[RMDB]
RNA sequence: GGGAACGACUCGAGUAGAGUCGAAAACAAGUCUAUCUGCCUGGAAGACUUCCGGGUCUCACUCAUAACCCCUCCCAGCUCAAGCUAAGGGGAAGGAGAGGUCUUUCCCCAGCACGCUGGCCAUGCCGCCUCAAUGUUCUUUCGAGAACAUUGAGGCAAAAGAAACAACAACAACAAC
Reactivity to 2A3 in 0.01 (KOAc 150mM, MgCl2 10mM, bicine 150mM(pH8.5), 24C), signal-to-noise 1, nucleotides 027 to 126: c040a000a050g020u030c020u080a300u000c010u120g090c030c010u070g070g000a110a060g130a220c100u060u010c000c020g040g020g030u000c020u080c000a040c000u060c030a100u110a220a090c000c000c000c030u030c000c030c000a010g000c000u040c080a160a080g020c000u100a080a150g000g000g000g020a000a000g040g000a070g030a090g050g080u000c020u010u010u010c000c000c000c000a000g000c010a020c020g000c030u020g050g000c050c020a040u110g080c070c010
Reactivity to DMS in 0.01 (KOAc 150mM, MgCl2 10mM, bicine 150mM(pH8.5), 24C), signal-to-noise 2, nucleotides 027 to 126: c150a070a080g000u020c040u000a110u000c040u000g000c050c090u010g010g020a030a080g000a080c110u000u010c040c070g020g000g000u000c040u000c080a130c080u000c090a080u000a100a210c000c000c000c040u000c040c040c010a030g000c000u000c170a080a160g000c000u000a060a120g030g000g000g000a000a000g000g030a040g000a110g020g010u000c000u000u000u000c000c000c000c040a050g020c060a140c120g000c020u000g010g030c140c070a070u000g010c150c160
Annotation
The record gives the reactivity of an RNA of 177 nucleotides to 2A3 and DMS. 2A3 adducts were read by reverse transcription with SuperScript II with manganese. The RNA was probed in 150 mM KOAc, 10 mM MgCl2 and 150 mM bicine (pH 8.5) at 24 C. DMS adducts were read by reverse transcription with MarathonRT. For 2A3, 1,222 sequencing reads were counted.